[RMDB]
RNA sequence: GGGAACGACUCGAGUAGAGUCGAAAAAGGUUAGUAUGUGCACUAAUUAUGAUCUUUCAAUUAUUAAUGCACGUAUUAAAGCUAAGCACAUUGUCUAUGUAGGAGAUCCAGCACAGUUGCCAGCUCCGGGCUGCGAACUUCGGUUCGCAGAAAAGAAACAACAACAACAAC
Reactivity to 2A3 in 0.01 (KOAc 150mM, MgCl2 10mM, bicine 150mM(pH8.5), 24C), signal-to-noise 7, nucleotides 027 to 129: a020g070g040u020u000a000g000u020a000u030g000u000g020c000a000c020u000a000a000u030u040a010u060g050a080u090c180u100u300u090c160a180a120u070u010a020u000u000a040a010u040g000c000a000c000g000u000a000u000u010a030a000a010g080c060u060a060a020g020c010a030c020a130u080u120g040u060c050u050a070u110g060u040a050g020g060a050g020a060u050c030c010a010g040c030a020c020a020g040u120u100g040c010c030a010g000c010u030c000c030g010g040g000
Reactivity to DMS in 0.01 (KOAc 150mM, MgCl2 10mM, bicine 150mM(pH8.5), 24C), signal-to-noise 3, nucleotides 027 to 129: a030g000g000u030u010a000g020u020a010u030g000u030g010c050a020c100u000a020a000u000u000a100u000g010a000u060c190u030u030u010c070a050a120u020u000a060u000u000a000a000u000g000c000a010c000g030u030a000u010u040a030a040a100g000c060u000a070a090g040c100a060c010a050u000u000g040u050c030u000a070u060g000u020a070g000g000a080g020a070u000c090c000a090g050c020a070c060a110g000u000u000g000c060c030a000g000c030u030c050c060g010g010g010